[RMDB]
RNA sequence: GGGAACGACUCGAGUAGAGUCGAAAAAAGUGAUUAUUCGUAAUCACUUCACGCCGGGCGCGGUGGCGCGUGCCUGUAGUCCCAGCUACUCGGGAGGGUAAACGACGUACCCGUUCGCGGGUACGAAACGUCUACUUAUUUUCGAAUAAGUAGACGUAAAAGAAACAACAACAACAAC
Reactivity to 2A3 in 0.01 (KOAc 150mM, MgCl2 10mM, bicine 150mM(pH8.5), 24C), signal-to-noise 5, nucleotides 027 to 126: a000a000g010u020g010a020u010u030a020u030u100c180g030u050a020a000u010c000a000c000u020u040c080a070c070g100c000c000g010g010g000c010g000c000g000g020u010g020g010c010g000c010g010u010g010c000c000u030g040u060a030g010u000c000c010c000a010g000c040u180a170c030u060c100g020g000g000a040g020g030g020u100a100a120a040c070g130a020c010g010u000a010c000c030c000g000u020u030c210g010c010g040g000g000u010a000c000g000a020a020
Reactivity to DMS in 0.01 (KOAc 150mM, MgCl2 10mM, bicine 150mM(pH8.5), 24C), signal-to-noise 6, nucleotides 027 to 126: a020a010g020u000g000a010u000u000a020u000u010c170g010u000a010a010u000c000a010c000u010u000c070a110c160g010c040c020g010g000g000c010g010c010g000g010u000g010g000c030g000c020g010u000g010c010c000u000g010u010a070g000u000c000c000c010a060g010c040u010a080c040u000c070g010g010g010a090g010g000g010u000a050a070a090c150g000a190c020g000u000a010c010c000c000g020u000u010c170g010c010g000g000g010u000a000c000g010a020a070